[RMDB]
RNA sequence: GGGAACGACUCGAGUAGAGUCGAAAAUCAGGCCUUUUUGCUCUGAACGAUGCAAGUUAAUAGAUCUGGGAGAAUGGGCCAGCGAAAGCCGAAAAAUUCCCGGAAGCUCCAUUGAUCCUGAGUCUAAUCAUGAGGAGUCAUUCGUGACUCCUCAUGAAAAAGAAACAACAACAACAAC
Reactivity to DMS in 0.01 (KOAc 150mM, MgCl2 10mM, bicine 150mM(pH8.5), 24C), signal-to-noise 1, nucleotides 027 to 126: u000c020a100g010g000c040c100u000u000u010u020u000g040c010u010c010u000g010a170a240c160g030a050u000g040c050a060a090g020u010u020a070a170u000a060g010a030u030c010u000g000g000g010a030g010a060a030u000g000g010g020c010c050a150g030c060g010a050a110a160g000c000c060g010a000a060a050a120a120u000u000c020c000c010g000g000a070a080g010c030u000c070c040a020u000u000g020a080u000c000c060u010g010a060g030u000c020u010a100a170